RNA sequence: GGGAACGACUCGAGUAGAGUCGAAAAGAUGAGAACAUACUGUUCAGUUGGGCAAUCAGGUGACACUCCAAUUCUUGCAGGAGGUCACGAGCAAGAAAAAGAGGACGGCCUGACUUAACAAAAGAAAGCCCACUAAAUCGUUCGCGAUUUAGUGGGCAAAAGAAACAACAACAACAAC
Reactivity to 2A3 in 0.01 (KOAc 150mM, MgCl2 10mM, bicine 150mM(pH8.5), 24C), signal-to-noise 1, nucleotides 027 to 126: g070a040u300g070a010g080a090a030c080a100u220a140c050u000g000u000u000c000a000g000u020u000g000g000g000c070a100a010u090c000a080g140g020u000g040a000c010a120c260u010c000c030a000a100u100u000c000u180u210g080c070a070g010g000a010g030g060u030c000a030c000g000a040g000c120a060a050g090a010a020a010a000a000g100a040g050g010a020c050g030g010c000c000u000g000a000c000u020u010a010a010c000a030a090a050a000g130a050a100a000
Reactivity to DMS in 0.01 (KOAc 150mM, MgCl2 10mM, bicine 150mM(pH8.5), 24C), signal-to-noise 1, nucleotides 027 to 126: g000a060u000g000a230g000a090a000c010a090u030a160c120u000g000u010u000c000a160g120u000u030g000g000g000c090a130a140u000c000a010g000g040u060g000a130c070a220c000u000c000c100a050a290u000u000c000u000u000g060c010a100g000g000a130g000g000u060c090a090c020g000a000g000c000a000a000g000a020a000a020a300a200g000a130g000g000a000c300g000g000c000c000u000g070a060c040u030u140a010a000c030a060a000a040a220g070a030a140a130
Structure probing data (2A3 and DMS) for a 177-nucleotide construct. The data come from the RNA Mapping Database (RMDB), library OK1LIB. Conditions: 150 mM KOAc, 10 mM MgCl2 and 150 mM bicine (pH 8.5), 24 C.